[RMDB]
RNA sequence: GGGAACGACUCGAGUAGAGUCGAAAAGUAAUGUUGUAAAACAGUGUUGCACUGCUGCUGUUGAUUUAAGUAUGGAUAAGUUGCGCCGUGUGGAUUGGAAAUCAACCCUACGGUUGUUACUUAUGUUUUACCAUGAAAUGUUCGCAUUUCAUGGUAAAAAAGAAACAACAACAACAAC
Reactivity to DMS in 0.01 (KOAc 150mM, MgCl2 10mM, bicine 150mM(pH8.5), 24C), signal-to-noise 1, nucleotides 027 to 126: g020u020a080a110u000g010u000u000g010u000a090a090a070a100c010a030g010u000g020u010u000g050c050a080c080u010g000c010u000g020c010u010g020u000u010g000a080u000u000u000a040a090g020u010a110u010g010g000a030u000a010a000g000u000u000g010c000g000c020c010g000u000g030u000g020g000a020u000u000g000g010a070a050a240u010c000a000a010c010c010c000u000a010c010g000g010u000u000g050u000u000a000c010u000u000a020u000g000u000u000